The record gives the reactivity of an RNA of 177 nucleotides to DMS and 2A3.
RNA sequence: GGGAACGACUCGAGUAGAGUCGAAAAGAAUGUGCAAGUGAUGAUAAAAAGACAGGGACAUCAGAUUCUCCUUUGGGAGAAGUAUAAUGAUGAUUAAGUCUAGAUGGGAAUCUCUCUGAUGCACCAAUAAUGGAUUCAUCUUCGGAUGAAUCCAUUAAAAAGAAACAACAACAACAAC
Reactivity to DMS in 0.01 (KOAc 150mM, MgCl2 10mM, bicine 150mM(pH8.5), 24C), signal-to-noise 5, nucleotides 027 to 126: g020a130a070u030g010u010g010c010a070a050g020u000g040a040u020g000a200u040a070a190a150a180a030g000a020c010a050g010g020g000a100c010a010u010c020a030g010a110u000u000c010u000c000c000u010u030u060g020g000g000a020g000a010a010g010u030a050u020a110a110u000g000a030u000g010a120u020u030a080a110g010u000c000u000a050g000a220u020g000g000g010a140a050u000c030u000c040u000c080u000g010a110u020g000c030a030c020c150a060a080
Reactivity to 2A3 in 0.01 (KOAc 150mM, MgCl2 10mM, bicine 150mM(pH8.5), 24C), signal-to-noise 5, nucleotides 027 to 126: g050a040a060u160g000u000g010c010a010a010g010u000g070a130u070g000a000u070a050a150a020a020a000g020a000c010a050g150g030g130a000c000a010u000c000a010g030a100u000u020c000u000c040c000u110u190u250g120g000g000a000g020a010a010g040u060a050u050a190a110u010g010a000u000g010a060u070u100a160a020g040u010c020u010a040g050a270u140g080g020g060a070a050u000c020u000c000u000c010u020g090a170u080g010c000a000c000c000a070a000
Background:
Values cover nucleotides 27 to 126. The RNA was probed in 150 mM KOAc, 10 mM MgCl2 and 150 mM bicine (pH 8.5) at 24 C.